[RMDB]
Description:
Structure probing data (2A3 and DMS) for a 170-nucleotide construct. The reactions ran in a buffer of 150 mM KOAc, 10 mM MgCl2 and 150 mM bicine (pH 8.5), at 24 C. DMS adducts were read by reverse transcription with MarathonRT. High 2A3 reactivity points to a flexible backbone, as in loops and unpaired stretches.
RNA sequence: GGGAACGACUCGAGUAGAGUCGAAAACUUCCCUCCCGCGCUGAGUUGAUUCUUCUUGUUCUUGAGGGCCUUCCUUCGUCGGUGAUCCUGCCUCUCCCUGUCGGUGAAUCCUCCCCUGAGAGGCCUCGUAGGACCAGCUUCGGCUGGUCCAAAAGAAACAACAACAACAAC
Reactivity to 2A3 in 0.01 (KOAc 150mM, MgCl2 10mM, bicine 150mM(pH8.5), 24C), signal-to-noise 2, nucleotides 027 to 129: c030u050u110c000c000c000u030c020c010c010g060c040g000c070u030g030a000g080u150u040g110a130u080u020c030u010u030c010u100u060g040u000u030c000u010u020g000a050g000g010g010c000c000u010u040c010c000u010u010c040g110u000c040g050g050u100g000a030u000c030c020u000g050c000c000u000c000u010c000c000c000u060g080u120c000g030g030u070g020a000a030u010c000c000u000c010c020c000c010u000g010a010g020a040g030g010c030c000u000c010g020u070a060
Reactivity to DMS in 0.01 (KOAc 150mM, MgCl2 10mM, bicine 150mM(pH8.5), 24C), signal-to-noise 2, nucleotides 027 to 129: c300u020u010c070c000c010u010c020c020c030g050c000g030c140u050g000a140g040u020u090g030a060u000u020c120u020u010c080u000u090g000u040u010c030u050u000g020a160g040g070g010c060c010u000u000c020c060u020u000c020g110u010c100g020g090u040g000a100u030c020c020u010g060c060c040u000c050u030c050c040c000u000g050u010c070g000g100u050g030a130a060u000c020c010u000c050c010c000c030u060g020a140g000a130g010g030c030c070u040c050g030u080a150
Source: RMDB library 15KLIB, as collected in RNAgym.